[RMDB]
RNA sequence: GGGAACGACUCGAGUAGAGUCGAAAAGGUUGGCGACGAUCGCGCAGAACAAUGAGCUGGGCGCGGGCAUGGCCGUGGCGUUGAAGGACCUAGAGAUCCGCGGUGCCGGCAACGUGCUCGGCAUCGAGCGCCAUAUCAGAUUCGUCUGAUAUGGCGCAAAAGAAACAACAACAACAAC
Reactivity to 2A3 in 0.01 (KOAc 150mM, MgCl2 10mM, bicine 150mM(pH8.5), 24C), signal-to-noise 2, nucleotides 027 to 126: g050g030u040u040g060g030c040g040a070c050g020a020u110c060g000c020g030c050a020g030a080a010c020a090a160u290g000a060g040c070u000g000g030g000c030g010c030g030g000g000c110a090u130g090g010c030c000g000u000g060g000c060g030u030u000g030a110a080g050g000a010c020c010u090a060g020a030g000a210u050c000c000g050c000g010g030u030g110c040c030g010g010c040a100a100c170g030u040g010c070u060c090g020g000c050a010u000c010g000a000
Reactivity to DMS in 0.01 (KOAc 150mM, MgCl2 10mM, bicine 150mM(pH8.5), 24C), signal-to-noise 2, nucleotides 027 to 126: g000g000u000u000g000g050c050g010a120c060g010a090u000c060g020c030g030c040a050g010a110a120c100a080a110u010g000a090g000c020u010g000g010g010c020g020c050g000g010g000c090a090u000g010g000c020c050g040u010g000g000c090g010u000u000g000a100a070g010g000a040c030c030u030a140g010a190g010a070u010c050c020g000c040g010g000u010g000c030c000g010g000c000a070a070c160g010u000g000c030u000c000g000g010c000a010u000c030g000a160